[RMDB]
RNA sequence: GGGAACGACUCGAGUAGAGUCGAAAAAGAAAACGCGCUUAUCGGCCCCCGCGCCCGAAAUAUUGCGCCAAUGCGGCUUGGGGAUUGGCUGCCUCAACCGUUUCGGGCAAUUCGGUAUAGCCGCGCGCGUAGGCGUAGGGUUCGCCCUACGCCUACGAAAAGAAACAACAACAACAAC
Reactivity to DMS in 0.01 (KOAc 150mM, MgCl2 10mM, bicine 150mM(pH8.5), 24C), signal-to-noise 2, nucleotides 027 to 126: a060g000a060a010a080a150c000g000c000g010c040u000u000a150u010c030g000g040c030c000c050c020c050g050c270g010c080c000c020g000a000a040a050u060a130u010u010g020c010g000c010c080a090a070u030g000c040g000g010c300u030u000g000g020g020g000a030u010u000g050g010c050u030g020c000c040u000c030a040a060c020c040g000u010u020u000c100g000g000g050c000a040a050u000u010c010g010g020u020a050u060a040g040c030c030g010c070g000c070g020
Reactivity to 2A3 in 0.01 (KOAc 150mM, MgCl2 10mM, bicine 150mM(pH8.5), 24C), signal-to-noise 4, nucleotides 027 to 126: a000g090a010a050a000a000c030g020c000g030c030u110u090a040u190c040g050g000c020c010c000c030c020g060c010g000c000c000c000g040a040a070a040u270a070u070u120g060c160g050c060c000a050a030u180g010c000g020g070c160u030u030g020g000g020g040a020u010u100g110g010c090u120g070c000c000u030c010a010a010c040c010g000u010u000u050c020g000g000g010c030a010a030u100u080c010g040g000u110a040u130a180g050c060c010g000c000g000c000g000